Structure probing data (2A3 and DMS) for a 177-nucleotide construct.
The 2A3 profile rests on 3,840 reads.
The RNA was probed in 150 mM KOAc, 10 mM MgCl2 and 150 mM bicine (pH 8.5) at 24 C.
The DMS profile rests on 11,012 reads.
2A3 adducts were read by reverse transcription with SuperScript II with manganese.
High 2A3 reactivity points to a flexible backbone, as in loops and unpaired stretches.
RNA sequence: GGGAACGACUCGAGUAGAGUCGAAAAGUGCGCUAUUUCGAUAGCGCACAAAGGCGGCGAGUCUCGCUCGGCGGCGGGCGACAGCGCGCAGCGCAGCCGGAACAUAACGCCACUUCGGUGGCGUUAAUAAUUCAAGGUAUUUCGAUACCUUGAAUUAAAAAGAAACAACAACAACAAC
Reactivity to 2A3 in 0.01 (KOAc 150mM, MgCl2 10mM, bicine 150mM(pH8.5), 24C), signal-to-noise 2, nucleotides 027 to 126: g000u010g020c000g000c000u000a010u010u100u050c040g060a000u010a010g000c000g020c010a000c000a000a000a000g000g010c030g000g000c000g010a020g050u000c010u020c040g020c030u080c070g080g000c030g020g030c000g030g050g000c030g010a030c030a030g030c060g020c030g020c070a030g030c000g010c000a000g020c010c010g000g020a060a010c040a050u110a020a000c010g010c000c000a020c000u040u100c230g060g000u010g010g010c020g000u000u000a000a000
Reactivity to DMS in 0.01 (KOAc 150mM, MgCl2 10mM, bicine 150mM(pH8.5), 24C), signal-to-noise 6, nucleotides 027 to 126: g010u000g010c000g010c000u000a000u000u000u010c180g010a030u000a010g000c000g010c000a000c000a010a050a080g010g020c010g000g010c010g010a060g000u000c060u000c030g000c010u010c110g000g010c080g000g020c010g010g010g020c010g010a080c300a060g000c030g000c010g000c030a030g010c020g020c030a050g010c000c010g000g010a070a070c130a160u000a000a010c000g010c010c000a020c000u000u010c170g030g020u000g000g000c000g000u000u000a010a070